The record gives the reactivity of an RNA of 207 nucleotides to 2A3.
[RMDB]
RNA sequence: GGGAACGACUCGAGUAGAGUCGAAAAGGGGUCAAGGGCAAUGAAUAUGGUAGAUUCGAUAAGUGUACUGAAGCCUCCACGGUACACUUUUGACGAAUCUAUAAUCAUAUUUGACCCUUGACGGAGGCACCCAAAGAGUUUACUUCGGUAAACUCAAGCCCCAUAAAAAGUUCGCUUUUUAUGGGGCAAAAGAAACAACAACAACAAC
Reactivity to 2A3 in 0.01 (KOAc 150mM, MgCl2 10mM, bicine 150mM(pH8.5), 24C), signal-to-noise 1, nucleotides 027 to 156: g000g010g050g000u000c000a000a000g020g040g060c050a060a030u090g150a180a070u100a000u090g000g000u000a000g010a020u000u000c020g050a060u010a120a000g000u010g010u000a010c000u020g050a140a050g010c000c040u000c010c000a000c000g010g000u000a000c000a040c040u010u010u050u040g180a150c020g000a000a000u000c000u000a010u010a000a030u060c000a000u020a150u200u100u080g250a300c000c040c020u000u000g000a010c010g010g000a000g000g030c000a010c000c010c000a020a100a090g020a000g030u050u020u000a000c010u000u070c240g080g000u070a010a000a000c000u030c020a000a030